[RMDB]
The record gives the reactivity of an RNA of 177 nucleotides to 2A3 and DMS. The RNA was probed in 150 mM KOAc, 10 mM MgCl2 and 150 mM bicine (pH 8.5) at 24 C. For 2A3, 4,339 sequencing reads were counted. Reactivities are given for positions 27 through 126. For 2A3 the reverse transcriptase was SuperScript II with manganese. High 2A3 reactivity points to a flexible backbone, as in loops and unpaired stretches. For DMS, 3,383 sequencing reads were counted.
RNA sequence: GGGAACGACUCGAGUAGAGUCGAAAAAGGGUCUCACUCUGCUGCCCAGGCUGGAGUGCGGUGGUGCAAUCAUGGCUCAGUGUAGCCUCGACAUCCUGGGAUCAAGCAAUCCUCCAGCCUCAGCCUCCCGCUACCUUUUAUUCGUAAAAGGUAGCGGAAAAGAAACAACAACAACAAC
Reactivity to 2A3 in 0.01 (KOAc 150mM, MgCl2 10mM, bicine 150mM(pH8.5), 24C), signal-to-noise 5, nucleotides 027 to 126: a000g070g000g000u030c020u010c050a060c010u080c010u020g050c020u020g030c000c040c010a010g000g000c000u020g000g000a020g020u110g070c040g030g060u170g020g010u050g020c030a040a060u110c030a100u150g020g000c010u020c080a120g120u080g140u300a010g020c000c030u040c030g040a060c010a050u070c010c030u070g000g060g050a080u100c050a070a010g050c020a020a070u040c000c010u010c000c000a030g000c000c000u020c000a010g010c010c020u040c010
Reactivity to DMS in 0.01 (KOAc 150mM, MgCl2 10mM, bicine 150mM(pH8.5), 24C), signal-to-noise 2, nucleotides 027 to 126: a030g000g000g030u000c060u000c120a040c020u010c000u000g000c030u000g000c080c040c060a090g000g000c000u020g000g020a020g000u010g040c050g000g000u030g010g000u030g000c070a110a170u010c110a060u000g000g000c000u010c010a180g000u070g000u040a000g000c000c010u010c160g000a140c050a050u040c020c040u000g000g000g000a070u020c100a090a080g000c080a090a110u060c080c000u000c020c010a050g000c020c000u000c150a090g000c060c030u020c100